[RMDB]
RNA sequence: GGGAACGACUCGAGUAGAGUCGAAAAAGGCAUGGUGGCACACGCCUGUGAUCCCAGCUACUUGGGAGGCUGAGUCAGGAUAAUCGCUUGAACCCAGAAGGUAGAGGUUGCAGUAAGCCGAGAUCACGAGUUAGCUUUGAUUCGUCAAAGCUAACUCAAAAGAAACAACAACAACAAC
Reactivity to 2A3 in 0.01 (KOAc 150mM, MgCl2 10mM, bicine 150mM(pH8.5), 24C), signal-to-noise 1, nucleotides 027 to 126: a030g070g020c050a000u090g020g020u000g080g010c020a020c000a000c120g000c020c010u040g080u080g020a070u060c000c000c000a010g030c000u140a090c010u040u080g030g020g000a020g090g000c030u030g010a020g040u070c030a010g000g080a070u070a140a070u160c040g060c090u010u040g000a040a040c000c000c020a040g070a140a020g080g000u000a030g010a030g090g000u030u080g060c000a030g010u050a020a020g020c010c040g000a000g000a060u160c080a030c150
Reactivity to DMS in 0.01 (KOAc 150mM, MgCl2 10mM, bicine 150mM(pH8.5), 24C), signal-to-noise 4, nucleotides 027 to 126: a070g010g000c020a060u010g010g010u010g010g030c030a130c060a040c090g010c010c000u000g010u000g000a140u000c000c000c010a050g020c070u000a040c100u000u000g000g010g010a100g000g010c020u000g000a080g000u000c040a050g020g000a070u010a060a100u000c100g000c020u010u000g010a080a110c030c000c020a060g000a090a070g000g010u000a060g010a110g010g010u000u000g000c050a080g010u000a090a070g010c020c030g010a100g000a050u010c090a070c200
Structure probing data (2A3 and DMS) for a 177-nucleotide construct. The RNA was probed in 150 mM KOAc, 10 mM MgCl2 and 150 mM bicine (pH 8.5) at 24 C. Values are in units of 0.01, from 0 to 300, in steps of 10. The DMS profile rests on 4,062 reads.